[RMDB]
RNA sequence: GGGAACGACUCGAGUAGAGUCGAAAAGAUAUGGAAACACACGAGCAACAUACAGCUUUUGACGCUCUCACAUCGGAAACGAUGUGUAGAGCGAUAAGCUGGUGUUGCUCGUGUGUUUCCUAAGUCAGUCGUUAAAUGGGUUCGCCCAUUUAACGACAAAAGAAACAACAACAACAAC
Reactivity to DMS in 0.01 (KOAc 150mM, MgCl2 10mM, bicine 150mM(pH8.5), 24C), signal-to-noise 1, nucleotides 027 to 126: g000a040u000a300u000g010g040a060a000a000c020a020c000a000c000g000a010g000c010a010a030c000a030u000a100c020a000g010c000u020u000u000u000g030a300c050g010c020u000c000u010c000a000c000a020u030c000g000g000a140a120a280c000g020a000u010g020u000g000u010a010g010a010g000c000g000a000u000a000a000g020c000u000g000g020u000g020u000u000g000c000u000c010g000u000g020u000g000u000u000u000c010c000u000a010a060g000u010c040a120
Source: RMDB library TTRINS, as collected in RNAgym.
This 177-nucleotide RNA was probed chemically with DMS.
The reactions ran in a buffer of 150 mM KOAc, 10 mM MgCl2 and 150 mM bicine (pH 8.5), at 24 C.
For DMS, 1,771 sequencing reads were counted.